RNA sequence: GGGAACGACUCGAGUAGAGUCGAAAACGCAAAGCUGCAGCGCGGCGCUCAGGAGGCCUUGCCCCGCGCACUGCUCUUUACAUGGCCCGACGUGAGGGCACUUCGCGGGCAGUGCUGCGGCCUCGUGAAACUGCCCCUAAGUUCGCUUAGGGGCAAACAGUCAUAGCUUGUUCGCAAGCUAUGACUGAAAAGAAACAACAACAACAAC
Reactivity to 2A3 in 0.01 (KOAc 150mM, MgCl2 10mM, bicine 150mM(pH8.5), 24C), signal-to-noise 2, nucleotides 027 to 156: c040g000c020a080a080a000g000c020u020g080c060a060g060c050g020c010g080g090c050g030c010u050c020a040g060g030a020g010g030c010c020u040u120g080c050c010c010c000g000c010g000c010a020c010u020g010c000u000c020u110u220u160a160c070a100u170g080g030c020c020c020g130a160c120g060u140g060a180g030g010g000c050a070c010u080u030c020g000c040g070g000g000c000a000g000u040g020c010u020g000c000g000g010c000c010u000c000g010u060g000a120a030a000c080u040g000c000c000c000c000u000a000a000g010u010u060c080g020c220u000u000a000g000g000g000g010c000a000a020a000
Description: An RNA of 207 nucleotides, treated with 2A3 and read out base by base. Source: RMDB library M2RFOK, as collected in RNAgym. Conditions: 150 mM KOAc, 10 mM MgCl2 and 150 mM bicine (pH 8.5), 24 C. Values cover nucleotides 27 to 156.